[RMDB]
RNA sequence: GGGAACGACUCGAGUAGAGUCGAAAACAUGUAUUGCAAAUCCACAUAUUCGUUGUGUUUGCACCACAACAAUAUGAGUGGGACACUAUAAUUUAUAAUAAUAGUGCGAAUACUGCGUUUUCUUACACCCUUAAAGUUUUUUCGAAAACUUUAAGGGAAAAGAAACAACAACAACAAC
Reactivity to DMS in 0.01 (KOAc 150mM, MgCl2 10mM, bicine 150mM(pH8.5), 24C), signal-to-noise 2, nucleotides 027 to 126: c060a050u020g010u000a020u010u010g000c120a040a110a130u050c020c000a050c000a010u000a000u000u000c230g030u000u000g020u000g000u000u000u070g000c200a140c300c000a000c010a010a000c010a030a020u000a010u000g000a060g000u010g040g000g000a210c010a030c000u000a000u000a040a050u020u010u060a120u040a230a140u030a140a020u000a000g000u000g000c110g000a040a020u000a010c010u000g020c100g000u000u000u020u000c010u000u000a120c250a140
Reactivity to 2A3 in 0.01 (KOAc 150mM, MgCl2 10mM, bicine 150mM(pH8.5), 24C), signal-to-noise 7, nucleotides 027 to 126: c030a040u200g020u060a060u040u080g100c060a040a030a080u050c010c000a000c000a010u020a010u020u030c120g000u010u000g000u000g030u030u090u190g060c060a020c040c010a010c000a000a000c000a000a000u010a010u030g060a050g110u050g000g020g030a010c000a000c010u020a020u030a110a140u090u200u200a270u110a160a090u220a100a010u010a010g010u010g020c020g080a020a010u030a040c020u050g080c040g090u040u020u040u010c000u000u050a030c050a090
The data come from the RNA Mapping Database (RMDB), libraries RFM100 and RFMREP. This 177-nucleotide RNA was probed chemically with DMS and 2A3. 2A3 adducts were read by reverse transcription with SuperScript II with manganese. The reactions ran in a buffer of 150 mM KOAc, 10 mM MgCl2 and 150 mM bicine (pH 8.5), at 24 C.